[RMDB]
RNA sequence: GGGAACGACUCGAGUAGAGUCGAAAAAGUUCAUGGGGCCUGGAAGGCUGUUUUACGUGUGGGUCAGACUCAACGGCCGGAGGCCAAGGUCAAGUUGAAUGUUGCAGUCCAGCCAGCGUCAGAAAACCUCACGUUAAAGGUUCGCCUUUAACGUGAGAAAAGAAACAACAACAACAAC
Reactivity to DMS in 0.01 (KOAc 150mM, MgCl2 10mM, bicine 150mM(pH8.5), 24C), signal-to-noise 1, nucleotides 027 to 126: a060g010u000u000c020a100u010g020g020g010g010c050c020u000g000g000a200a160g000g000c040u000g000u000u010u000u010a060c070g020u010g040u000g000g000g010u010c070a160g000a180c000u000c090a030a090c030g030g030c020c040g020g020a160g000g020c020c030a040a170g010g010u000c080a060a120g020u000u000g010a110a100u010g010u000u010g000c100a040g020u000c020c020a010g000c010c010a050g000c060g000u000c020a090g000a050a080a090a050c230